[RMDB]
RNA sequence: GGGAACGACUCGAGUAGAGUCGAAAAGUGAGUGGGUGCGCAAGUGGGUGCGCGAAUGCGCGGGGCGUGCGAGGUGAGUGUGUGCGCCCGCCCCUGCGCCCCUCCCCCUGCCUACAACUUGAUCUUAACCUAAACGUGACUUCGGUCACGUUUAGGUAAAAGAAACAACAACAACAAC
Reactivity to 2A3 in 0.01 (KOAc 150mM, MgCl2 10mM, bicine 150mM(pH8.5), 24C), signal-to-noise 3, nucleotides 027 to 126: g160u150g050a070g060u070g030g000g010u140g080c030g010c060a070a120g050u190g140g000g010u110g030c000g000c000g060a200a090u300g000c000g000c000g000g000g000g000c000g000u010g000c000g000a080g100g090u150g070a130g040u270g000u040g000u010g030c030g000c000c040c010g040c010c000c000c000u010g010c000g010c030c030c000c000u040c020c020c000c000c000u020g000c000c000u060a070c020a250a090c080u010u130g030a050u020c010u030u070a000